The data come from the RNA Mapping Database (RMDB), library M2RFPK.
The record gives the reactivity of an RNA of 207 nucleotides to 2A3.
High 2A3 reactivity points to a flexible backbone, as in loops and unpaired stretches.
2A3 adducts were read by reverse transcription with SuperScript II with manganese.
Conditions: 150 mM KOAc, 10 mM MgCl2 and 150 mM bicine (pH 8.5), 24 C.

[RMDB]
RNA sequence: GGGAACGACUCGAGUAGAGUCGAAAAGAAAGAAAGAAGCGAGCUGGCGCAGCCGCACGGGCAACCGUCAAUCCAGCACUUCUCAAGUCUUGUCGUUCUGACAGGACAUCCAUCAACCCACCGGGAAAAAAGGACUACAGCUUCGGCUGUAGUCCAAGGUUACCGGUAUAUUCGUAUACCGGUAACCAAAAGAAACAACAACAACAAC
Reactivity to 2A3 in 0.01 (KOAc 150mM, MgCl2 10mM, bicine 150mM(pH8.5), 24C), signal-to-noise 1, nucleotides 027 to 156: g000a010a080a000g000a030a110a000g020a000a000g000c080g080a050g010c030u000g010g050c070g020c070a020g040c070c190g110c070a010c030g070g000g000c090a040a040c020c010g030u030c000a010a030u030c020c010a010g040c040a070c010u030u030c020u000c020a100a000g000u000c020u000u010g000u000c000g060u100u290c110u300g000a010c000a000g000g000a000c000a010u000c000c000a040u060c000a060a100c010c000c050a040c100c120g030g020g070a010a170a000a000a000a010g020g030a020c000u000a000c000a000g050c030u060u270c240g120g000c000u000g000u000a000g010u010c000c000a000a000